[RMDB]
RNA sequence: GGGAACGACUCGAGUAGAGUCGAAAAUAAAGGAUUCCAAAGUGGAGCAGCAAGACAACUUUCUAAAACGCAUGUCAGGGAUGAUCCGUCUCUACGCUGCUAUCAUCCAGCUCCGGUGGCCAUAUGGGAUCAAAUGGUUUUUCGAAACCAUUUGAUCAAAAGAAACAACAACAACAAC
Reactivity to 2A3 in 0.01 (KOAc 150mM, MgCl2 10mM, bicine 150mM(pH8.5), 24C), signal-to-noise 4, nucleotides 027 to 126: u210a030a090a020g060g000a050u130u000c020c000a040a000a040g130u090g030g030a020g010c010a010g000c010a070a090g010a040c030a050a040c070u060u170u090c070u220a080a110a040a040c090g070c120a050u070g020u040c030a010g000g050g000a020u020g030a060u060c020c040g040u000c010u000c020u060a040c080g030c020u030g020c010u010a060u050c000a010u000c020c000a000g000c020u030c020c010g000g040u050g020g000c010c010a060u060a090u200g150g010
Reactivity to DMS in 0.01 (KOAc 150mM, MgCl2 10mM, bicine 150mM(pH8.5), 24C), signal-to-noise 5, nucleotides 027 to 126: u010a090a110a110g010g000a130u010u000c020c030a070a130a150g020u000g020g010a070g020c020a060g000c070a150a090g000a050c030a050a110c070u010u000u000c090u040a060a060a080a070c190g000c130a060u020g000u010c030a180g000g000g000a030u000g010a040u010c080c090g000u000c050u000c090u010a070c140g020c110u010g010c060u000a050u000c040a040u000c020c040a090g000c130u000c030c020g010g030u000g010g000c050c010a070u010a060u010g000g010

This 177-nucleotide RNA was probed chemically with 2A3 and DMS. Source: RMDB library OK2TRN, as collected in RNAgym. The 2A3 profile rests on 5,376 reads. Values cover nucleotides 27 to 126. For DMS, 4,884 sequencing reads were counted. The reactions ran in a buffer of 150 mM KOAc, 10 mM MgCl2 and 150 mM bicine (pH 8.5), at 24 C.